[RMDB]
RNA sequence: GGGAACGACUCGAGUAGAGUCGAAAAUCCACCUUGGGGUGCCCUAGUCGGACACUGCAGUUCCGAUGGAAAGGCUAAGCACGUCGCAAUGACGUAAGGUGGGACUUUUCUUUCUGGAACCAAGCGGGUUAUCAAUUACCUUCGGGUAAUUGAUAACAAAAGAAACAACAACAACAAC
Reactivity to DMS in 0.01 (KOAc 150mM, MgCl2 10mM, bicine 150mM(pH8.5), 24C), signal-to-noise 4, nucleotides 027 to 126: u010c010c000a040c020c020u000u010g020g020g010g010u000g010c000c000c000u010a130g000u000c030g000g010a010c130a110c180u020g000c220a140g010u000u000c010c000g000a020u000g000g010a060a060a080g000g000c020u000a070a110g030c190a030c010g010u000c000g020c180a070a130u020g010a030c010g010u010a040a020g020g020u000g000g000g010a090c130u000u000u000u000c060u000u000u010c100u000g020g000a070a140c040c040a080a120g010c150g000g000
Reactivity to 2A3 in 0.01 (KOAc 150mM, MgCl2 10mM, bicine 150mM(pH8.5), 24C), signal-to-noise 3, nucleotides 027 to 126: u010c000c000a020c010c000u060u020g000g000g020g130u060g020c000c010c000u000a010g000u010c010g010g020a010c030a040c160u300g030c030a070g010u220u000c000c000g010a000u020g030g070a050a020a000g000g000c010u010a040a010g100c040a010c030g010u030c020g010c210a280a300u300g000a000c000g020u010a010a000g010g010u000g000g000g000a000c020u040u040u050u030c000u000u120u030c070u080g100g050a090a060c030c020a090a050g090c150g080g130